[RMDB]
This 207-nucleotide RNA was probed chemically with 2A3 and DMS. Values cover nucleotides 27 to 156.
RNA sequence: GGGAACGACUCGAGUAGAGUCGAAAACGUGCCCGUCGGCGUAGCCGACAACAUGCCCAGGUAGCCCAGACCUUCAAGGCUACGGUGCGUUGCGACGCACGGUCUGAUUCUUCACAACGACGUUCACAAGAUCGGAUCACUUUCGAGUGAUCCGAAAAUAUUGAUCAUCGUUCGCGAUGAUCAAUAUAAAAGAAACAACAACAACAAC
Reactivity to 2A3 in 0.01 (KOAc 150mM, MgCl2 10mM, bicine 150mM(pH8.5), 24C), signal-to-noise 3, nucleotides 027 to 156: c030g020u030g020c010c030c100g000u010c000g020g060c250g110u200a050g020c020c000g030a010c000a000a020c030a030u140g050c000c000c010a010g030g020u000a000g030c030c050c160a030g040a030c010c000u020u010c020a040a010g000g000c010u000a000c010g020g000u030g000c010g000u000u100g060c190g040a040c000g020c000a010c000g000g000u040c000u010g010a050u100u100c060u150u150c070a080c060a230a080c120g130a040c080g100u100u120c030a060c060a300a060g050a200u020c010g000g000a000u000c000a000c010u040u100u120c170g030a020g020u000g000a000u000c000c020g000a000a000a000
Reactivity to DMS in 0.01 (KOAc 150mM, MgCl2 10mM, bicine 150mM(pH8.5), 24C), signal-to-noise 1, nucleotides 027 to 156: c030g030u010g010c000c010c120g030u000c040g060g010c000g000u000a140g030c020c000g040a120c040a160a010c050a030u010g000c000c030c000a210g020g000u000a020g000c020c000c150a140g000a060c020c000u050u000c070a080a250g010g000c010u000a030c000g030g010u000g010c020g010u000u000g010c130g000a120c000g000c030a060c020g000g000u000c000u000g040a150u000u010c060u010u000c050a090c050a090a140c000g010a150c030g000u010u000c010a070c000a110a170g000a150u000c010g000g020a000u000c000a000c000u000u010u010c220g000a040g040u000g010a020u010c000c000g010a000a000a050
Annotation
It was measured as part of the RMDB library M2RFPK. The RNA was probed in 150 mM KOAc, 10 mM MgCl2 and 150 mM bicine (pH 8.5) at 24 C. For 2A3, 1,826 sequencing reads were counted. DMS adducts were read by reverse transcription with MarathonRT.